[RMDB]
RNA sequence: GGGAACGACUCGAGUAGAGUCGAAAACAGCCCAACGUUAGGGGCACGAAAGGUGCACCAAGUAAUAGGUUCACCAUUGUGGCUAACGAUUGCAUCGACGCGUUAGUCAGAAGAGCAGUGGUAUAGUGCGAAGGUACACUGAGGGACUAGGCUGACGGAAUGACGCUUUGUUCGCAAAGCGUCAUUCAAAAGAAACAACAACAACAAC
Reactivity to 2A3 in 0.01 (KOAc 150mM, MgCl2 10mM, bicine 150mM(pH8.5), 24C), signal-to-noise 2, nucleotides 027 to 156: c030a020g040c000c000c000a050a000c060g030u030u080a050g030g010g040g080c040a000c050g090a140a010a000g130g020u060g000c120a110c020c000a070a010g140u140a100a100u130a140g000g010u000u020c000a000c000c000a030u050u090g020u020g020g000c010u000a000a000c000g100a170u010u180g010c020a060u080c100g150a190c000g030c000g050u010u000a000g000u030c060a040g020a100a000g050a000g010c040a000g000u030g070g040u050a040u130a010g100u060g110c060g090a140a020g020g040u010a000c000a000c000u030g030a060g000g050g010a060c000u020a090g080g000c040u060g010a030c000g150